[RMDB]
RNA sequence: GGGAACGACUCGAGUAGAGUCGAAAAUCACGAGUACAACCUGCCUAUAUGAUUGUACUCGGAGUAAAUCAUAUAGUCGACGAAGUCGAUUACGUUACUCAUUUGUCGUAUUUUCAAGAAGGCAGGAGAUAGUAUUCACAUUCGUGUGGGUACUAUCAAAAGAAACAACAACAACAAC
Reactivity to DMS in 0.01 (KOAc 150mM, MgCl2 10mM, bicine 150mM(pH8.5), 24C), signal-to-noise 9, nucleotides 027 to 126: u030c050a170c040g000a040g010u010a020c050a050a120c000c010u000g000c010c000u000a110u030a080u020g000a090u010u000g010u000a000c000u010c030g010g000a020g000u000a010a030a070u050c150a130u040a250u020a020g010u000c000g010a010c010g020a160a130g010u000c000g000a010u000u000a020c230g000u000u000a010c010u010c010a170u020u020u020g010u000c090g000u010a070u010u000u010u010c060a070a100g010a110a050g000g000c000a000g000g010a240
Reactivity to 2A3 in 0.01 (KOAc 150mM, MgCl2 10mM, bicine 150mM(pH8.5), 24C), signal-to-noise 9, nucleotides 027 to 126: u110c030a020c090g030a020g060u090a030c020a050a080c010c000u000g010c010c000u120a120u020a050u290g080a090u040u040g010u000a000c000u000c020g000g000a000g000u010a010a080a050u130c110a010u110a020u040a170g020u000c010g030a020c100g200a280a030g020u010c000g000a030u010u030a040c070g020u010u010a010c000u010c030a120u060u070u260g100u070c050g000u050a100u040u080u020u060c030a050a060g060a030a010g110g000c000a000g000g000a020
Notes: Structure probing data (DMS and 2A3) for a 177-nucleotide construct. 2A3 adducts were read by reverse transcription with SuperScript II with manganese. The RNA was probed in 150 mM KOAc, 10 mM MgCl2 and 150 mM bicine (pH 8.5) at 24 C. Reactivities are given for positions 27 through 126. For DMS, 76,335 sequencing reads were counted.